[RMDB]
RNA sequence: GGGAACGACUCGAGUAGAGUCGAAAAGGGUAUUGGGUCCAUUCACUCUUCCUAGGGCCACUGGGUAAGGGCCAGGGCCUACCGAUUUUGGGCCGGGCGGGACUGGGAGGGAUCCCACAGGGCCCGACUAAAUCAAGUCAUUCGUGACUUGAUUUAGAAAAGAAACAACAACAACAAC
Reactivity to 2A3 in 0.01 (KOAc 150mM, MgCl2 10mM, bicine 150mM(pH8.5), 24C), signal-to-noise 6, nucleotides 027 to 126: g060g000g010u100a100u150u180g030g000g010u000c020c010a020u160u170c060a030c020u030c010u060u020c010c020u060a070g010g030g030c060c070a130c030u020g020g020g030u150a080a070g040g040g020c010c020a020g010g020g000c010c000u020a030c030c030g160a140u070u060u130u230g020g000g000c050c050g000g000g030c180g010g000g040a060c050u080g020g010g040a160g020g020g000a010u000c000c030c000a020c040a020g000g020g000c000c010c000g000a010
Reactivity to DMS in 0.01 (KOAc 150mM, MgCl2 10mM, bicine 150mM(pH8.5), 24C), signal-to-noise 5, nucleotides 027 to 126: g000g000g010u010a100u010u000g010g000g000u010c020c020a130u010u010c160a070c060u000c030u010u000c030c010u000a090g010g020g020c070c080a100c040u000g000g000g020u000a090a090g020g010g010c030c070a060g010g020g010c010c010u010a030c170c100g000a160u000u000u000u000g010g010g030c040c020g000g010g020c160g010g000g020a100c160u010g020g010g010a060g010g010g010a150u000c010c000c010a030c100a050g000g000g000c010c000c000g010a100